Overview:
The record gives the reactivity of an RNA of 207 nucleotides to 2A3. For 2A3 the reverse transcriptase was SuperScript II with manganese.
[RMDB]
RNA sequence: GGGAACGACUCGAGUAGAGUCGAAAACGGGCCUGGACCCAGUGGCAAUCGUCAACGAGUUCAAUGCCGCUGGCGCACUGUCCGAGGCUACCUACGUGGCCCUGGAAGGUGCUGGCUUCAGCCGUGCGAUCACGGACUCGAUCAUCGCUGGCCAACACGCCUAUGAGUCAUUCGUGACUCAUAGGCGAAAAGAAACAACAACAACAAC
Reactivity to 2A3 in 0.01 (KOAc 150mM, MgCl2 10mM, bicine 150mM(pH8.5), 24C), signal-to-noise 2, nucleotides 027 to 156: c000g000g010g010c000c030u060g050g040a050c000c010c000a000g010u000g000g000c050a070a140u070c090g210u120c130a250a230c120g050a060g080u160u160c150a220a120u100g000c000c000g000c020u010g000g030c030g010c040a070c020u100g030u030c000c010g000a040g000g050c020u040a020c010c050u090a110c130g010u020g030g000c000c000c010u030g130g000a090a050g010g040u030g050c050u060g060g010c000u140u060c040a000g040c010c010g020u070g040c070g050a100u240c000a020c080g150g040a120c060u050c090g040a070u050c040a040u060c060g020c040u090g010g000c030c000a040a020c020a030
The RNA was probed in 150 mM KOAc, 10 mM MgCl2 and 150 mM bicine (pH 8.5) at 24 C.
It was measured as part of the RMDB library OK3TST.